[RMDB]
RNA sequence: GGGAACGACUCGAGUAGAGUCGAAAAAAAAGAUAUGGACUAGCGAGAUGAACUACGUCCGCUGAACAGAGCUCGGAAACGAGCUCUGAUACGAAUAAGGACGCAUCCGCUAGUCCUAAGUCAAAAAGAACUAUCUUAACUUCGGUUAAGAUAGUUCAAAAGAAACAACAACAACAAC
Reactivity to 2A3 in 0.01 (KOAc 150mM, MgCl2 10mM, bicine 150mM(pH8.5), 24C), signal-to-noise 2, nucleotides 027 to 126: a020a060a000a000g090a050u070a050u080g000g000a000c000u010a020g040c000g040a300g030a300u020g040a080a130c090u160a050c300g000u000c010c000g020c060u050g040a050a010c020a000g000a000g010c000u000c020g020g000a060a040a060c000g010a000g000c020u000c000u000g000a000u000a030c030g030a110a170u200a300a040g010g030a010c000g020c030a000u000c000c000g000c010u000a010g000u010c010c000u000a010a000g000u010c010a000a010a000a070a090
Reactivity to DMS in 0.01 (KOAc 150mM, MgCl2 10mM, bicine 150mM(pH8.5), 24C), signal-to-noise 3, nucleotides 027 to 126: a160a100a050a110g010a020u010a300u000g000g000a010c000u000a000g020c000g020a170g000a040u000g010a090a070c220u030a300c020g020u000c000c010g000c130u000g030a210a160c000a000g000a000g020c010u000c000g010g020a100a110a180c010g040a000g010c000u000c000u000g000a020u010a090c200g000a110a120u020a110a150g010g020a020c010g010c010a020u000c020c010g010c000u020a010g000u000c000c000u000a000a050g010u020c030a100a050a050a070a130

Chemical mapping of a 177-nucleotide RNA with 2A3 and DMS. High DMS reactivity at an A or C suggests that its Watson-Crick edge is free. The RNA was probed in 150 mM KOAc, 10 mM MgCl2 and 150 mM bicine (pH 8.5) at 24 C. For 2A3 the reverse transcriptase was SuperScript II with manganese.